[RMDB]
RNA sequence: GGGAACGACUCGAGUAGAGUCGAAAAGUGCCAGAGAAGUUGUAUAUUGGGCUACCAUCCAGUGAUGCAAUGGAGGCUUAUUAGGGUUGUCAGUUAUCCACAGGGUAGCAAUUAAAACUGUCUGAAAAAAACGAAACCACCUUCGGGUGGUUUCGAACACAUAAUUGGUCUUCGGACCAAUUAUGUGAAAAGAAACAACAACAACAAC
Reactivity to 2A3 in 0.01 (KOAc 150mM, MgCl2 10mM, bicine 150mM(pH8.5), 24C), signal-to-noise 1, nucleotides 027 to 156: g010u020g030c010c010a050g010a010g010a300a010g010u020u000g000u040a050u010a050u130u190g000g010g010c020u030a010c000c050a030u130c000c030a070g010u110g100a060u030g030c000a040a000u000g030g010a000g070g020c010u070u060a120u070u130a170g140g000g000u000u010g020u010c000a030g000u090u140a050u130c010c030a060c020a040g010g000g010u050a060g020c030a050a030u180u150a100a000a020a000c010u000g000u000c030u000g010a000a070a000a000a000a000a000c000g000a000a000a000c000c000a000c000c010u060u040c100g100g010g000u000g000g000u000u000u020c040g000a000a000
Reactivity to DMS in 0.01 (KOAc 150mM, MgCl2 10mM, bicine 150mM(pH8.5), 24C), signal-to-noise 1, nucleotides 027 to 156: g050u000g030c000c030a150g000a160g040a170a250g000u010u000g030u030a100u020a120u010u010g000g010g020c020u000a100c050c030a150u010c000c000a160g030u000g000a140u000g000c060a050a020u010g000g000a150g030g010c030u000u040a080u010u010a110g010g010g000u000u000g000u000c000a030g010u010u010a020u000c030c030a120c030a210g050g040g010u000a020g010c020a070a140u000u000a020a020a010a020c000u000g000u030c010u040g000a000a000a030a060a090a060a300c010g000a010a050a050c000c000a000c010c000u000u010c290g060g110g110u000g030g030u000u000u010c020g020a010a210